[RMDB]
RNA sequence: GGGAACGACUCGAGUAGAGUCGAAAAUUAACCAAUUCUUAGGACGUUCAUGAAUCCAUUUAAUAACCAUACCGAAUUGUGCUAGUGUAAAUGGAAUAAAUACACCAACAGCAUACAAUGGAAUUAACACCCCCUCAUAAUUCGUUAUGAGGGGGUGAAAAGAAACAACAACAACAAC
Reactivity to 2A3 in 0.01 (KOAc 150mM, MgCl2 10mM, bicine 150mM(pH8.5), 24C), signal-to-noise 1, nucleotides 027 to 126: u130u000a010a020c020c010a040a070u080u000c030u090u060a060g020g000a020c000g060u060u070c120a040u070g080a040a080u050c010c000a050u100u040u040a110a100u060a030a050c070c000a060u050a030c040c050g120a180a140u030u100g000u010g000c000u010a020g010u010g030u070a060a090a060u060g090g100a010a000u090a100a050a010u070a000c030a010c060c020a030a120c010a100g000c010a000u010a030c050a050a060u070g000g000a010a050u090u030a130a000
Reactivity to DMS in 0.01 (KOAc 150mM, MgCl2 10mM, bicine 150mM(pH8.5), 24C), signal-to-noise 2, nucleotides 027 to 126: u020u000a130a300c030c010a100a150u000u020c060u020u000a110g010g000a070c060g010u000u030c080a090u010g000a130a110u000c000c000a060u020u000u010a040a080u000a110a130c060c070a060u000a060c100c080g010a100a110u010u010g060u000g000c000u010a050g010u000g010u000a020a040a090u000g030g010a060a050u020a010a080a170u010a000c080a060c030c100a020a130c140a050g020c010a020u030a050c130a040a040u020g010g000a160a060u000u020a010a210

This 177-nucleotide RNA was probed chemically with 2A3 and DMS. 2A3 adducts were read by reverse transcription with SuperScript II with manganese. The DMS profile rests on 1,377 reads. The reactions ran in a buffer of 150 mM KOAc, 10 mM MgCl2 and 150 mM bicine (pH 8.5), at 24 C. It was measured as part of the RMDB library OK2TST.